Source: RMDB library OK2TRN, as collected in RNAgym. An RNA of 177 nucleotides, treated with 2A3 and DMS and read out base by base. The DMS profile rests on 2,629 reads. The RNA was probed in 150 mM KOAc, 10 mM MgCl2 and 150 mM bicine (pH 8.5) at 24 C.

[RMDB]
RNA sequence: GGGAACGACUCGAGUAGAGUCGAAAACUUGGUCUGUGGUCAUGACGGAAGGAGCUCCAGAGGAAACACUCCCACCUCGACUGUACACACCUGUAGGAUUGGAGGACUUAACUCAAGCUGAGAGAGAGGCAAGAAUUAGAUUCGUCUAAUUCUUGCCAAAAGAAACAACAACAACAAC
Reactivity to 2A3 in 0.01 (KOAc 150mM, MgCl2 10mM, bicine 150mM(pH8.5), 24C), signal-to-noise 3, nucleotides 027 to 126: c000u040u030g050g050u040c040u030g110u080g100g000u070c040a060u090g050a040c060g000g060a050a060g020g020a040g000c010u000c060c010a000g000a020g020g080a080a110a010c030a030c050u000c010c020c000a040c000c010u020c040g030a030c030u070g070u150a020c040a000c000a030c060c030u030g090u090a020g020g080a120u040u100g050g010a010g050g030a010c040u080u060a060a020c010u030c080a080a030g060c110u070g030a060g010a020g010a000g010a040
Reactivity to DMS in 0.01 (KOAc 150mM, MgCl2 10mM, bicine 150mM(pH8.5), 24C), signal-to-noise 3, nucleotides 027 to 126: c060u000u010g000g000u020c040u010g010u010g010g020u010c080a050u000g020a100c090g010g000a120a070g000g010a100g020c080u000c070c070a090g000a110g000g000a120a060a060c120a080c140u000c010c010c040a130c050c010u000c030g010a130c110u000g030u000a040c100a090c100a080c090c050u010g010u000a060g000g010a100u000u000g010g000a050g000g000a050c080u000u000a070a080c040u010c030a060a070g010c060u010g000a110g000a090g000a130g000a190